[RMDB]
RNA sequence: GGGAACGACUCGAGUAGAGUCGAAAAGAAGCCAAAGAGCGUGGGAGGGUAUAGCGGUACACGCACGGCGUCACAGUCGUUGAGUCGAGUAGGUACGGCCUCUUCGAAACACGGGAUUAACUGCCCCCUAUUGGCGCAAUUUCGAUUGCGCCAAUAGAAAAGAAACAACAACAACAAC
Reactivity to DMS in 0.01 (KOAc 150mM, MgCl2 10mM, bicine 150mM(pH8.5), 24C), signal-to-noise 3, nucleotides 027 to 126: g010a210a090g000c030c040a140a130a100g000a150g070c030g000u000g020g000g000a060g010g000g000u000a050u030a090g020c050g020g010u000a050c090a020c040g080c010a140c040g030g020c010g020u010c070a000c100a140g000u010c110g020u000u000g010a180g000u000c020g010a060g020u010a140g000g000u000a070c110g000g000c030c050u000c020u010u000c080g000a110a070a140c050a000c030g060g030g020a140u020u030a070a150c070u010g020c030c000c000c210
Reactivity to 2A3 in 0.01 (KOAc 150mM, MgCl2 10mM, bicine 150mM(pH8.5), 24C), signal-to-noise 4, nucleotides 027 to 126: g010a030a000g030c030c030a140a070a020g120a020g040c100g000u110g000g030g020a130g030g010g040u130a120u090a130g110c050g020g000u050a030c060a000c060g020c010a030c020g000g020c030g080u070c040a010c010a050g170u110c050g070u150u070g040a020g030u020c010g020a020g040u080a020g160g080u030a050c050g090g000c000c010u040c000u050u060c060g040a080a060a010c040a020c060g010g030g000a010u040u070a070a040c030u080g020c000c000c000c000